[RMDB]
RNA sequence: GGGAACGACUCGAGUAGAGUCGAAAACUUAUGCGUUGGUACAUUUACCUUAGGUAACUUGUCCCACUUUUAUGCUCUUCAAUUUGGUCUAGUGUAAAAUGGAGCAAAUAGGCCCACUUCCUUAUUACGAGGCAUAUUAUAAGGAUAAAGUGAUGUAGGUCCUAUUAGGUUUCGACCUAAUAGGACCAAAAGAAACAACAACAACAAC
Reactivity to 2A3 in 0.01 (KOAc 150mM, MgCl2 10mM, bicine 150mM(pH8.5), 24C), signal-to-noise 2, nucleotides 027 to 156: c010u090u000a030u180g020c030g060u040u070g000g000u010a060c100a070u030u020u030a050c010c020u060u110a100g000g050u050a050a010c070u020u030g000u030c000c060c000a030c040u060u000u020u080a020u000g000c000u040c040u240u040c110a230a200u110u140u150g050g000u020c120u100a130g010u000g090u170a080a110a040a150u150g050g000a100g080c000a000a130a100u100a020g070g020c000c000c000a010c010u010u010c000c000u000u010a030u020u010a010c060g030a120g060g030c020a010u000a050u250u000a070u000a000a000g040g000a000u090a150a070a060g050u070g100a100u180g190u290a050
An RNA of 207 nucleotides, treated with 2A3 and read out base by base. Source: RMDB library OK3TST, as collected in RNAgym. For 2A3, 545 sequencing reads were counted.